Description
An RNA of 177 nucleotides, treated with 2A3 and DMS and read out base by base. Reactivities are given for positions 27 through 126.

RNA sequence: GGGAACGACUCGAGUAGAGUCGAAAAAUACAAGAAUAACAGAACGUGCAAUACUAAAAUUAAUUUGAUGCUCAGCUAAAAGAGUAAGAUAUGUUAGCAGAAGUUAAGAUGGUUUUAAUUAUCCUCGCACAGUAGCAGUAUUCGUACUGCUACUGUGAAAAGAAACAACAACAACAAC
Reactivity to 2A3 in 0.01 (KOAc 150mM, MgCl2 10mM, bicine 150mM(pH8.5), 24C), signal-to-noise 2, nucleotides 027 to 126: a000u120a070c030a080a000g110a060a040u030a090a010c000a020g140a140a030c050g060u030g000c000a030a040u040a180c060u090a020a080a170a270u130u130a030a100u040u070u160g060a050u100g000c010u010c070a030g060c060u130a050a080a000a110g060a030g040u050a030a080g040a070u130a010u200g030u050u010a000g000c020a020g000a140a020g050u030u000a020a010g010a020u040g030g000u010u070u020u040a030a030u090u060a050u030c030c020u030c000g090
Reactivity to DMS in 0.01 (KOAc 150mM, MgCl2 10mM, bicine 150mM(pH8.5), 24C), signal-to-noise 3, nucleotides 027 to 126: a070u000a110c060a000a070g000a240a130u000a040a030c100a110g020a110a110c100g010u010g010c050a110a060u000a020c060u000a070a060a080a110u000u010a080a070u010u000u000g010a140u010g010c010u010c070a080g010c150u010a040a100a080a120g000a040g000u010a060a070g010a080u000a050u010g020u010u000a100g010c010a040g010a060a080g000u000u010a020a030g010a120u000g010g010u000u020u000u000a040a110u000u000a100u000c010c020u010c220g020